[RMDB]
RNA sequence: GGGAACGACUCGAGUAGAGUCGAAAAGCCCGGCCACGACCAAUCCGGCCUUGACCAGCGGGUCGAACUGGGCAUUGUUCGCGCUGGCGUACACGUCGGCCCGCGCCCCAUUUUCGAGUUGGGUACGCUCGUCAGAAUAGUUCGCUAUUCUGACGAGAAAAGAAACAACAACAACAAC
Reactivity to 2A3 in 0.01 (KOAc 150mM, MgCl2 10mM, bicine 150mM(pH8.5), 24C), signal-to-noise 2, nucleotides 027 to 126: g020c000c020c000g030g000c040c030a100c060g080a040c020c010a050a070u090c060c050g020g000c010c020u080u110g130a140c000c020a020g000c010g030g000g000u010c010g010a060a040c090u120g000g090g000c090a090u030u150g050u030u050c030g000c020g010c190u140g160g030c010g020u030a030c050a000c100g090u060c000g030g000c000c000c000g000c000g030c000c000c010c000a070u210u080u060u110c110g050a110g050u030u030g050g000g060u050a020c080g010
Reactivity to DMS in 0.01 (KOAc 150mM, MgCl2 10mM, bicine 150mM(pH8.5), 24C), signal-to-noise 3, nucleotides 027 to 126: g000c030c010c030g000g010c020c020a070c050g010a080c020c040a090a140u000c110c080g010g010c030c040u000u000g000a080c140c040a110g020c210g010g020g020u010c010g000a090a070c120u010g000g000g030c100a110u000u010g020u000u010c030g010c080g050c140u020g000g010c000g020u010a040c090a090c090g000u000c010g010g000c000c010c020g010c030g020c100c010c000c020a120u010u000u010u000c100g020a110g010u000u000g010g000g000u010a110c110g010

About this RNA:
The record gives the reactivity of an RNA of 177 nucleotides to 2A3 and DMS. For DMS, 3,459 sequencing reads were counted. The 2A3 profile rests on 2,639 reads. The RNA was probed in 150 mM KOAc, 10 mM MgCl2 and 150 mM bicine (pH 8.5) at 24 C. The data come from the RNA Mapping Database (RMDB), library OK2TST.